[RMDB]
RNA sequence: GGGAACGACUCGAGUAGAGUCGAAAACAACAGUUUUGUCGGGGGUUCCUGUAACAGGUCUGUUGCGUGUGCGUUUUUAUUUGACGAAUUCUGACCGAUAUUGGUAGCACAUGAAUCCCAUCGUAAUCUUGAAGUUCUAUUUCGAUAGAACUUCAAGAAAAGAAACAACAACAACAAC
Reactivity to 2A3 in 0.01 (KOAc 150mM, MgCl2 10mM, bicine 150mM(pH8.5), 24C), signal-to-noise 9, nucleotides 027 to 126: c000a010a000c010a010g000u010u030u060u060g050u050c030g010g000g010g070g130u250u300c010c000u020g030u040a060a020c010a020g010g010u010c000u010g010u010u020g000c010g000u010g000u010g010c020g020u000u010u010u090u110a260u070u090u170g080a040c050g060a050a090u210u050c060u120g070a060c020c030g010a020u020a070u220u040g050g000u020a050g000c010a010c000a010u000g010a020a040u010c000c010c000a020u060c080g060u060a030a100u010
Reactivity to DMS in 0.01 (KOAc 150mM, MgCl2 10mM, bicine 150mM(pH8.5), 24C), signal-to-noise 4, nucleotides 027 to 126: c010a030a030c020a030g000u000u000u010u010g020u000c010g010g000g000g010g010u020u030c010c020u000g010u030a090a020c050a020g000g000u000c000u000g000u000u000g000c030g040u010g020u000g000c020g010u020u000u010u020u010a070u010u010u030g010a120c140g000a130a120u030u030c080u020g000a090c100c050g000a070u020a080u020u000g010g010u010a120g010c010a020c020a020u000g010a130a090u010c000c010c000a110u030c140g000u020a130a130u020
An RNA of 177 nucleotides, treated with 2A3 and DMS and read out base by base. Values cover nucleotides 27 to 126. High DMS reactivity at an A or C suggests that its Watson-Crick edge is free. DMS adducts were read by reverse transcription with MarathonRT. The RNA was probed in 150 mM KOAc, 10 mM MgCl2 and 150 mM bicine (pH 8.5) at 24 C. It was measured as part of the RMDB libraries RFM100 and RFMREP.